[RMDB]
RNA sequence: GGGAACGACUCGAGUAGAGUCGAAAAGUCGAAUGGUUUGUUUUAGCCUGAGCUAUGUGUUAUUGCACAUACAUAGCUUCUUGUUAAAACAUACCAAUCGGUAAAGAGGGUCUGUUCGCAGACCCUCGGAACGCGAAAGGUUCGCCUUUCGCGUUCCAAAAGAAACAACAACAACAAC
Reactivity to 2A3 in 0.01 (KOAc 150mM, MgCl2 10mM, bicine 150mM(pH8.5), 24C), signal-to-noise 1, nucleotides 027 to 126: g100u040c000g000a040a020u000g020g020u000u020u000g000u000u000u000u000a000g010c000c000u030g000a010g080c010u010a000u000g030u010g040u030u050a170u270u300g060c120a070c000a060u020a000c000a010u020a000g000c000u190u090c010u050u000g000u000u000a000a030a000a000c000a000u000a000c000c000a000a000u000c000g000g040u090a220a220a070g000a010g020g020g000u000c010u000g050u060u120c250g000c110a010g000a000c010c000c000u010c000